[RMDB]
Structure probing data (2A3 and DMS) for a 177-nucleotide construct.
RNA sequence: GGGAACGACUCGAGUAGAGUCGAAAAACAAGAGUCCUACUGCCCGGGAGUAGAGGAGGGACAGCGCGUUGCCCUCAUAAGGGAAGCCUUGCAGGGCGGUCAACCUGGGGGCUCGACCCUGAGAAGGGUCUACUGUUGACUUCGGUCAACAGUAGACAAAAGAAACAACAACAACAAC
Reactivity to 2A3 in 0.01 (KOAc 150mM, MgCl2 10mM, bicine 150mM(pH8.5), 24C), signal-to-noise 1, nucleotides 027 to 126: a000c080a050a020g000a010g070u030c000c020u030a060c010u050g020c010c010c010g050g060g030a110g030u210a070g010a060g090g030a020g040g000g010a010c020a070g110c040g010c010g090u060u090g040c000c010c000u020c010a060u080a060a020g000g010g080a070a010g040c010c000u010u110g130c020a000g000g000g030c050g020g060u060c020a040a030c010c000u020g010g000g010g000g020c020u010c010g050a070c000c000c000u030g010a010g050a020a070g120g000
Reactivity to DMS in 0.01 (KOAc 150mM, MgCl2 10mM, bicine 150mM(pH8.5), 24C), signal-to-noise 3, nucleotides 027 to 126: a070c100a090a120g010a110g020u000c030c000u010a080c040u000g050c030c000c000g020g010g010a080g010u010a100g020a090g010g010a070g010g010g000a080c050a100g000c150g020c130g000u000u000g000c000c000c010u010c040a110u010a090a020g000g010g000a140a070g000c020c010u000u000g030c060a060g000g020g010c070g010g000u000c110a080a070c030c030u000g000g000g000g000g000c040u000c100g010a060c010c010c000u010g000a110g000a110a060g020g010
High 2A3 reactivity points to a flexible backbone, as in loops and unpaired stretches. For DMS, 2,584 sequencing reads were counted. For 2A3 the reverse transcriptase was SuperScript II with manganese.